[RMDB]
An RNA of 207 nucleotides, treated with 2A3 and DMS and read out base by base. 2A3 adducts were read by reverse transcription with SuperScript II with manganese. The 2A3 profile rests on 2,966 reads. It was measured as part of the RMDB library M2RFPK. For DMS the reverse transcriptase was MarathonRT.
RNA sequence: GGGAACGACUCGAGUAGAGUCGAAAAGUCUCCUAGGGAGCUUGGCCGUCGGGCCUUACACCCCGACUUGCUGAGUUUCUCUAGGAGAGUCCCUUUCCCAGCCAGAGGUGGCUGGUCAAACAAUACCAAAACUCUUGCUAGUUCGCUAGCAAGAGAACUGAUUAACAAAGUUCGCUUUGUUAAUCAGAAAAGAAACAACAACAACAAC
Reactivity to 2A3 in 0.01 (KOAc 150mM, MgCl2 10mM, bicine 150mM(pH8.5), 24C), signal-to-noise 3, nucleotides 027 to 156: g010u000c000u000c000c000u000a010g000g000g000a010g010c000u010u000g020g000c000c020g010u010c010g000g010g020c010c000u060u120a050c040a040c020c010c000c000g000a020c020u070u300g000c000u020g010a020g000u080u300u000c000u000c000u010a000g010g000a000g000a000g000u010c000c000c000u000u100u030c010c000c010a000g010c000c000a010g000a010g000g020u000g000g010c000u090g020g020u220c040a000a010a020c050a060a050u000a000c000c000a020a040a110a190c000u000c000u000u000g000c000u000a010g030u090u060c250g030c100u000a000g000c000a000a000g000a000g000a010a010
Reactivity to DMS in 0.01 (KOAc 150mM, MgCl2 10mM, bicine 150mM(pH8.5), 24C), signal-to-noise 1, nucleotides 027 to 156: g000u000c000u010c020c020u010a050g020g000g000a030g000c010u000u020g020g040c000c300g010u010c060g010g030g020c080c080u010u000a150c180a210c300c010c000c000g010a040c010u010u000g050c000u000g010a050g030u000u000u010c010u000c000u000a020g010g010a030g000a010g010u010c010c010c030u000u000u030c090c040c000a060g040c040c010a030g010a300g020g020u000g010g010c000u010g000g010u000c050a020a020a050c100a060a020u000a070c030c010a110a120a170a160c020u000c010u010u010g010c000u010a000g010u010u010c300g040c000u010a010g010c000a000a000g010a000g010a010a030
The RNA was probed in 150 mM KOAc, 10 mM MgCl2 and 150 mM bicine (pH 8.5) at 24 C.